[RMDB]
RNA sequence: GGGAACGACUCGAGUAGAGUCGAAAAGACGCCUUUAGAAGAAGAGGCUAGGGGGUAUUCCGGUGUGGGAUACUUAGUAAUAUGCAACGCUAAUUGCAUAAGAUUGUAGGACAGAAUUUACAGUCUUUAGAGAUAAGCACGUUCGCGUGCUUAUCAAGAUCAUGUAAGGAUUCGUCCUUACAUGAUCAAAAGAAACAACAACAACAAC
Reactivity to DMS in 0.01 (KOAc 150mM, MgCl2 10mM, bicine 150mM(pH8.5), 24C), signal-to-noise 4, nucleotides 027 to 156: g020a120c080g000c010c020u010u000u000a110g020a140a200g000a130a130g020a070g010g020c010u000a070g030g010g020g040g030u010a070u000u010c030c010g030g070u020g030u000g020g010g020a030u000a030c020u000u010a100g020u010a090a120u000a040u000g000c010a030a050c070g010c140u010a060a120u010u000g020c000a060u000a040a060g010a050u000u000g020u000a030g000g010a300c040a230g020a060a300u000u000u000a030c020a030g000u000c000u000u000u000a090g010a190g000a040u000a000a010g000c000a010c000g020u000u000c300g030c020g050u000g000c000u000u000a010u000c000a030a100
Reactivity to 2A3 in 0.01 (KOAc 150mM, MgCl2 10mM, bicine 150mM(pH8.5), 24C), signal-to-noise 9, nucleotides 027 to 156: g070a020c060g020c010c010u060u050u080a220g030a290a020g030a050a020g010a030g020g000c020u050a080g040g020g010g000g000u010a030u040u030c040c040g120g100u230g050u210g100g010g000a010u010a040c010u030u040a020g010u050a030a110u030a020u090g000c010a030a010c070g030c190u120a070a080u080u020g000c010a010u010a050a030g010a010u020u040g020u030a020g000g070a030c050a100g110a160a080u080u080u050a040c010a010g010u000c000u050u060u090a100g020a000g000a040u000a000a000g000c000a000c010g010u030u060c140g010c010g080u000g000c000u000u000a000u000c000a000a000
About this RNA:
Structure probing data (DMS and 2A3) for a 207-nucleotide construct. Values cover nucleotides 27 to 156. The RNA was probed in 150 mM KOAc, 10 mM MgCl2 and 150 mM bicine (pH 8.5) at 24 C. For 2A3, 13,071 sequencing reads were counted.